[RMDB]
RNA sequence: GGGAACGACUCGAGUAGAGUCGAAAAGAUAUGGAUCCAGAAGGGAGAGGUGGUCGGUCGGAAACGACCGAGCCACUACCCACCUCCCAGGAUCCUAAGUCAAAACCAUUAGGUUCGCCUAAUGGAAGCAGUAAAUUUACUUCGGUAAAUUUACUGCAAAAGAAACAACAACAACAAC
Reactivity to DMS in 0.01 (KOAc 150mM, MgCl2 10mM, bicine 150mM(pH8.5), 24C), signal-to-noise 2, nucleotides 027 to 126: g000a060u000a300u000g000g000a000u000c010c020a110g030a200a190g000g020g010a010g000a210g000g010u000g000g000u000c000g010g000u010c000g040g000a120a090a220c010g020a010c010c010g010a040g000c000c000a030c000u000a070c070c110c180a300c170c000u000c020c000c000a150g020g000a040u000c000c000u000a000a060g020u000c040a100a070a100a180c010c010a010u000u000a030g000g000u000u000c290g010c000c000u000a000a000u000g000g030a050a090
Reactivity to 2A3 in 0.01 (KOAc 150mM, MgCl2 10mM, bicine 150mM(pH8.5), 24C), signal-to-noise 2, nucleotides 027 to 126: g030a020u050a070u160g000g000a000u000c040c010a150g250a300a300g100g020g000a020g020a070g090g040u030g000g000u040c010g020g000u000c010g020g000a100a020a080c000g000a000c000c000g010a020g000c000c000a010c000u020a030c010c000c010a040c020c000u030c030c000c010a000g020g000a000u000c000c000u020a180a020g070u000c040a040a000a090a250c020c010a010u030u000a040g140g040u020u090c300g170c070c020u030a010a010u000g010g030a030a030
Structure probing data (DMS and 2A3) for a 177-nucleotide construct. The reactions ran in a buffer of 150 mM KOAc, 10 mM MgCl2 and 150 mM bicine (pH 8.5), at 24 C. The 2A3 profile rests on 2,170 reads.